[RMDB]
RNA sequence: GGGAACGACUCGAGUAGAGUCGAAAAUGACGGCAUGGAGCGCAUCGGUGAUGCCGUCGAUACCAGCGAUUGCAAAAUCGCCGGGCUUCAGGUUGGCGGCCUUGAUCGCUUCAAUCGCGCCAAGCGACCAUAGUAAUGCAUUCGUGCAUUACUAUGGAAAAGAAACAACAACAACAAC
Reactivity to 2A3 in 0.01 (KOAc 150mM, MgCl2 10mM, bicine 150mM(pH8.5), 24C), signal-to-noise 6, nucleotides 027 to 126: u140g050a030c050g010g020c030a040u060g020g010a010g010c030g010c080a050u040c040g100g060u160g050a150u160g000c000c000g000u000c000g000a010u050a170c000c000a000g000c000g000a010u010u040g040c050a100a030a010a050u010c000g000c000c000g030g000g020c030u290u230c120a060g040g190u030u030g020g000c000g000g000c000c010u020u120g010a010u010c010g000c000u000u000c000a010a060u060c060g020c020g000c050c020a030a010g070c030g040a030
Reactivity to DMS in 0.01 (KOAc 150mM, MgCl2 10mM, bicine 150mM(pH8.5), 24C), signal-to-noise 9, nucleotides 027 to 126: u010g010a070c050g010g020c060a150u000g010g000a020g010c010g030c250a050u000c050g020g010u010g010a100u000g020c000c000g020u000c000g010a040u010a080c010c010a090g010c000g010a010u000u000g000c300a090a080a020a010u000c000g010c000c030g010g000g000c170u010u000c260a090g010g000u000u000g010g010c000g000g000c040c050u000u010g000a020u000c020g000c010u000u000c020a050a080u010c110g010c030g010c030c040a070a120g010c100g010a190